Chemical mapping of a 177-nucleotide RNA with 2A3 and DMS.
RNA sequence: GGGAACGACUCGAGUAGAGUCGAAAAGAUAUGGACAGAGAAUCGUGCAGUUCGAAGAACAGGACUUAAGUUCGGAAACGAACUUAAGUCCUGGGAGAACUGACCCACGAUUAUCUGUCCUAAGUCACUUAAAGUAUUCGUUCGCGAAUACUUUAAGAAAAGAAACAACAACAACAAC
Reactivity to 2A3 in 0.01 (KOAc 150mM, MgCl2 10mM, bicine 150mM(pH8.5), 24C), signal-to-noise 1, nucleotides 027 to 126: g000a020u100a050u200g000g000a030c010a000g000a000g030a070a040u010c000g000u020g000c000a010g010u000u020c060g110a300a020g020a150a060c030a010g030g000a000c010u000u000a000a020g000u020u000c010g050g000a070a100a020c020g000a000a000c020u010u000a000a000g000u020c000c000u000g000g000g000a020g000a010a000c000u020g010a040c000c040c020a010c010g000a000u010u000a010u020c000u000g000u010c010c000u010a000a010g010u010c020a030
Reactivity to DMS in 0.01 (KOAc 150mM, MgCl2 10mM, bicine 150mM(pH8.5), 24C), signal-to-noise 4, nucleotides 027 to 126: g010a060u000a300u010g000g000a020c010a000g010a030g000a040a020u010c000g040u010g010c030a020g010u000u010c000g000a180a160g030a200a240c020a010g010g000a030c000u010u000a010a010g010u000u000c010g010g020a080a120a270c000g000a010a010c000u000u000a000a000g010u000c010c000u000g000g020g010a130g010a010a000c000u000g010a190c300c300c060a010c000g010a020u000u000a030u000c000u000g000u000c000c000u000a010a050g010u010c020a280

Annotation:
It was measured as part of the RMDB library TTRINS. Values cover nucleotides 27 to 126.